[RMDB]
RNA sequence: GGGAACGACUCGAGUAGAGUCGAAAACACCGGCAGAGGCGCUAUGCAGGAACGCUAGGGAUCCUUCAGCGGAGGACUGAAGAAACUCCGGUUUCUUCUUUCACUCUGUAGCUGGAAUCCUUGUUGCGCUUGCUGGCGAAACCUGCAGGAAGCUAGCCACACUGAGGUAGUUCGCUACCUCAGUGUGAAAAGAAACAACAACAACAAC
Reactivity to 2A3 in 0.01 (KOAc 150mM, MgCl2 10mM, bicine 150mM(pH8.5), 24C), signal-to-noise 2, nucleotides 027 to 156: c080a020c000c040g060g030c010a010g040a100g260g160c010g000c000u050a050u300g020c000a010g000g030a170a030c050g010c010u020a030g010g000g010a030u020c010c020u020u060c050a000g000c000g030g010a000g000g000a000c010u010g000a010a000g000a010a010a010c010u030c070c110g050g000u010u000u000c000u000u000c010u020u020u010c150a290c070u000c030u050g100u120a040g000c010u010g010g000a030a080u010c000c000u020u080g300u300u040g030c020g000c000u000u010g000c000u020g000g010c010g070a080a040a010c020c000u000g000c020a000g010g050a060a000g060c120u110a010g060c020